[RMDB]
RNA sequence: GGGAACGACUCGAGUAGAGUCGAAAAUUGGCGGGGUAAUGGCCCACCAAGCCGAAGACGGGUAGCGGGUGUGAGAGCACGACCCGCGACAUCGGGACUGAGACACUGCCCGGACUCCUACGGGAGGUUACAACUUUGCGUUCGCGCAAAGUUGUAAAAAAGAAACAACAACAACAAC
Reactivity to DMS in 0.01 (KOAc 150mM, MgCl2 10mM, bicine 150mM(pH8.5), 24C), signal-to-noise 1, nucleotides 027 to 126: u030u000g030g010c010g000g040g000g000u000a070a090u010g030g010c000c000c010a070c020c010a030a020g020c010c010g000a030a060g020a060c020g000g000g030u000a030g000c020g020g030g000u010g030u020g000a190g000a140g020c000a030c030g000a000c000c000c010g000c110g000a050c210a030u010c010g000g000g000a100c040u000g000a180g000a030c030a130c100u040g000c000c000c000g000g010a150c010u000c020c000u000a060c170g000g000g000a000g000g020
Reactivity to 2A3 in 0.01 (KOAc 150mM, MgCl2 10mM, bicine 150mM(pH8.5), 24C), signal-to-noise 2, nucleotides 027 to 126: u030u040g030g000c030g040g020g000g010u090a150a150u120g080g070c000c000c000a010c000c000a020a060g040c000c000g000a040a000g140a030c040g000g000g000u070a020g010c000g000g030g000u030g010u020g020a300g000a020g180c020a010c000g120a060c040c000c000g000c000g020a030c020a050u040c000g000g000g060a050c040u110g110a020g000a060c050a030c060u050g010c030c000c000g000g030a030c050u000c000c000u000a050c080g050g010g000a000g050g000